[RMDB]
An RNA of 177 nucleotides, treated with DMS and 2A3 and read out base by base. For 2A3, 349 sequencing reads were counted. The data come from the RNA Mapping Database (RMDB), library RFM100. Conditions: 150 mM KOAc, 10 mM MgCl2 and 150 mM bicine (pH 8.5), 24 C. For DMS the reverse transcriptase was MarathonRT. For 2A3 the reverse transcriptase was SuperScript II with manganese. The DMS profile rests on 770 reads.

RNA sequence: GGGAACGACUCGAGUAGAGUCGAAAAGAGCCGCAUGCCCUUCACUGGGUGUGUCGGGGAACCAGGACUUUUACUUUGAAAAAAUUAGAGUGUUCAAAGCAGGCCUAUGCUCGAAUACAUUAGCAUGUUGCUGCUCAAUGUUCGCAUUGAGCAGCAAAAAAGAAACAACAACAACAAC
Reactivity to DMS in 0.01 (KOAc 150mM, MgCl2 10mM, bicine 150mM(pH8.5), 24C), signal-to-noise 1, nucleotides 027 to 126: g000a300g000c000c000g010c000a000u000g030c000c000c000u000u100c300a100c270u000g000g010g080u000g000u010g000u000c050g000g000g000g000a070a140c110c120a060g000g000a010c000u030u000u040u000a100c000u000u060u000g000a000a000a030a050a120a030u000u040a230g000a070g070u100g000u000u000c000a000a130a150g030c260a070g000g000c010c000u070a060u000g000c000u000c140g080a080a050u070a120c030a230u070u000a040g050c000a070u000g000
Reactivity to 2A3 in 0.01 (KOAc 150mM, MgCl2 10mM, bicine 150mM(pH8.5), 24C), signal-to-noise 1, nucleotides 027 to 126: g000a040g050c000c000g000c010a000u000g000c040c000c000u000u130c070a200c300u070g000g080g000u000g070u000g050u200c180g000g000g000g000a020a020c000c000a000g010g000a080c040u080u030u030u030a010c050u040u000u100g050a060a060a000a090a090a040u020u280a040g080a000g210u070g080u110u000c000a010a000a010g060c040a000g000g000c000c040u220a160u140g000c000u080c000g000a040a000u050a000c090a000u150u300a030g000c000a000u020g000